[RMDB]
Source information:
This 177-nucleotide RNA was probed chemically with 2A3 and DMS. For 2A3 the reverse transcriptase was SuperScript II with manganese. For DMS, 1,129 sequencing reads were counted. High DMS reactivity at an A or C suggests that its Watson-Crick edge is free. For 2A3, 1,117 sequencing reads were counted. It was measured as part of the RMDB library OK2TST.
RNA sequence: GGGAACGACUCGAGUAGAGUCGAAAAUGGAAGUACCGCCGCGGCAUACCGAAGGCCGCCGCGGCCUCUGCAAGCAGCUGCGGGUAGCGGUCGAAAUUGAUGUUCGAUCCCUGCACCUGUGCGUCGACUACGCGUCUAGUUUCGACUAGACGCGUAGAAAAGAAACAACAACAACAAC
Reactivity to 2A3 in 0.01 (KOAc 150mM, MgCl2 10mM, bicine 150mM(pH8.5), 24C), signal-to-noise 1, nucleotides 027 to 126: u120g020g050a090a010g050u050a070c000c000g020c000c000g000c030g000g000c030a040u060a110c050c070g230a120a050g050g020c000c000g000c000c010g000c040g000g000c000c000u050c010u020g040c020a020a100g000c010a000g010c010u020g000c010g000g030g000u060a090g160c080g070g000u000c010g050a000a030a030u190u300g140a090u260g140u020u030c020g000a020u020c000c000c030u020g000c000a020c010c010u000g020u050g010c040g040u030c040g000a040
Reactivity to DMS in 0.01 (KOAc 150mM, MgCl2 10mM, bicine 150mM(pH8.5), 24C), signal-to-noise 2, nucleotides 027 to 126: u010g000g020a060a070g020u010a150c050c020g000c010c090g000c020g000g030c020a060u000a260c120c110g020a150a080g000g020c100c070g040c030c140g030c020g040g010c060c040u000c010u010g030c100a080a300g010c010a040g000c130u000g000c000g000g000g020u080a080g020c200g000g000u000c000g000a000a030a080u000u010g010a140u000g050u010u000c010g000a020u000c010c020c010u000g000c010a020c130c000u000g000u000g020c300g000u010c120g040a160